[RMDB]
RNA sequence: GGGAACGACUCGAGUAGAGUCGAAAAGAACCGAAGAUUUCGAUCUUCGGUUCAAAAAACCUUUGUGGUAGACAUGCUAGCUGCCACCCAUUGGGUGGUCAGCUUAGCAACAGCUACCACUCUGGUAAAAACACGUUUUAAUUCGUUAAAACGUGAACUUAGUAUACCUCUUCGGAGGUAUACUAAGAAAAGAAACAACAACAACAAC
Reactivity to DMS in 0.01 (KOAc 150mM, MgCl2 10mM, bicine 150mM(pH8.5), 24C), signal-to-noise 1, nucleotides 027 to 156: g010a030a000c010c010g020a050a010g020a060u000u000u000c300g040a060u000c010u000u000c000g050g010u000u000c000a000a020a140a150a090a020c010c000u010u000u010g070u000g040g000u000a040g010a040c040a300u000g030c000u000a060g000c010u010g060c000c010a030c000c000c010a230u000u000g050g050g040u000g000g020u000c020a020g010c000u000u010a030g010c000a060a040c070a130g010c000u000a020c000c000a010c000u030c030u000g020g000u000a020a060a070a140a140c010a010c000g010u000u000u010u000a000a070u000u010c270g040u000u000a000a000a000a020c000g030u010g020a040a080
Reactivity to 2A3 in 0.01 (KOAc 150mM, MgCl2 10mM, bicine 150mM(pH8.5), 24C), signal-to-noise 3, nucleotides 027 to 156: g000a000a000c000c020g020a000a000g010a010u180u190u300c290g060a010u020c010u000u000c000g000g000u000u000c010a010a010a000a010a000a010c000c010u000u000u020g000u000g000g000u000a000g000a040c060a100u030g000c000u000a000g000c000u000g010c000c000a000c000c020c010a300u270u300g020g000g000u010g010g020u220c040a010g000c000u000u050a000g010c000a020a000c040a000g000c000u000a000c000c000a000c000u000c000u000g000g020u100a130a010a000a000a010c000a000c000g000u000u000u010u020a050a030u060u080c180g040u040u000a010a000a000a000c000g000u010g010a000a000